[RMDB]
RNA sequence: GGGAACGACUCGAGUAGAGUCGAAAAAUCGUUACCAACGGAACAUCGACGUCGAACAAAAUUGUGGGUAUGUACGCCGCGCCAUCCGGCAGUACGCUGUUGAUCGACCGCAAUUGUCAUAAAUCGCCAAGCAAUGUGGAUUCGUCCACAUUGCUUGAAAAGAAACAACAACAACAAC
Reactivity to 2A3 in 0.01 (KOAc 150mM, MgCl2 10mM, bicine 150mM(pH8.5), 24C), signal-to-noise 3, nucleotides 027 to 126: a000u080c010g030u020u040a110c020c030a020a030c050g000g010a080a050c050a130u080c020g080a030c040g090u090c040g020a090a050c030a080a060a040a090u050u060g020u040g000g070g000u100a090u210g020u000a010c020g000c000c000g010c030g040c040c030a070u080c030c010g030g000c020a010g020u020a000c020g020c080u050g080u160u100g080a090u090c060g060a010c000c010g000c010a030a080u020u060g010u000c010a000u070a170a060a080u110c050g080c060
Reactivity to DMS in 0.01 (KOAc 150mM, MgCl2 10mM, bicine 150mM(pH8.5), 24C), signal-to-noise 4, nucleotides 027 to 126: a090u000c060g000u000u000a120c070c070a100a110c150g000g000a030a070c130a060u000c020g030a110c100g010u020c110g010a070a100c140a060a060a040a040u000u000g020u000g010g030g010u010a080u010g000u000a020c040g010c000c010g000c140g010c040c050a040u010c070c000g000g010c000a070g030u010a010c050g000c100u010g010u000u020g010a100u000c040g000a070c020c040g000c050a030a020u000u000g000u000c120a080u020a060a050a080u010c060g020c120